Chemical mapping of a 177-nucleotide RNA with DMS and 2A3.
For 2A3 the reverse transcriptase was SuperScript II with manganese.
[RMDB]
RNA sequence: GGGAACGACUCGAGUAGAGUCGAAAAGAUAUGGAUCUCGCGACGAUCUACACCAUUCGGAAACGAAUGUUGUAGGGAGCGAUAUCCUAAGUCAAAACGCAAGUGUGUGUUCGCACACACUUGCGAACACUGUAGUAUGGUUCGCCAUACUACAGUGAAAAGAAACAACAACAACAAC
Reactivity to DMS in 0.01 (KOAc 150mM, MgCl2 10mM, bicine 150mM(pH8.5), 24C), signal-to-noise 7, nucleotides 027 to 126: g000a020u000a280u010g000g000a010u000c050u000c000g010c000g010a070c160g010a060u010c000u000a010c000a010c050c000a010u000u000c000g010g000a070a060a140c000g010a020a000u000g000u000u000g010u000a000g000g000g000a160g010c000g000a010u000a010u000c000c000u010a020a110g000u000c020a080a060a100a190c020g010c010a010a010g020u000g010u000g020u000g000u000u010c240g020c000a010c000a000c000a000c000u000u000g000c000g000a040a080
Reactivity to 2A3 in 0.01 (KOAc 150mM, MgCl2 10mM, bicine 150mM(pH8.5), 24C), signal-to-noise 6, nucleotides 027 to 126: g030a020u060a040u140g000g000a010u010c020u010c060g000c000g130a300c010g030a130u010c000u010a000c000a000c000c000a000u000u010c010g020g040a060a070a070c010g000a010a000u000g000u010u010g000u010a000g010g010g000a010g000c000g000a000u000a010u000c000c000u000a100a020g060u030c030a040a030a070a130c020g000c000a000a000g000u000g000u000g000u010g020u070u140c300g050c150a000c000a000c000a000c000u010u000g000c000g000a010a000